[RMDB]
RNA sequence: GGGAACGACUCGAGUAGAGUCGAAAAAGUGAUAAAUUCUAACAGAUAAUGCAACUCAGUCUACUUGGAUGUUCACACCUGAGACUGGAGAAGACCUGCUGCCUUCUGCAGAGCCAAACAUUCCUCACAUGCUCCUCCACAAUGCUAGUUAAUGCAAAUUUACUGGCGGAUUCGUCCGCCAGUAAAUAAAAGAAACAACAACAACAAC
Reactivity to 2A3 in 0.01 (KOAc 150mM, MgCl2 10mM, bicine 150mM(pH8.5), 24C), signal-to-noise 1, nucleotides 027 to 156: a000g070u080g050a070u130a190a140a020u160u010c010u100a140a100c030a000g090a030u120a210a090u200g080c030a030a050c020u000c010a030g020u070c000u020a140c030u220u070g010g000a130u130g130u300u120c100a080c050a040c280c000u010g000a040g010a070c000u010g010g000a130g020a000a040g070a000c000c010u010g010c010u000g010c050c060u010u070c050u020g030c040a000g000a040g170c020c000a000a000a100c030a100u070u160c010c000u010c000a070c010a030u160g010c010u000c020c000u010c040c000a010c090a080a080u130g000c000u000a030g070u230u170a050a010u140g080c020a000a150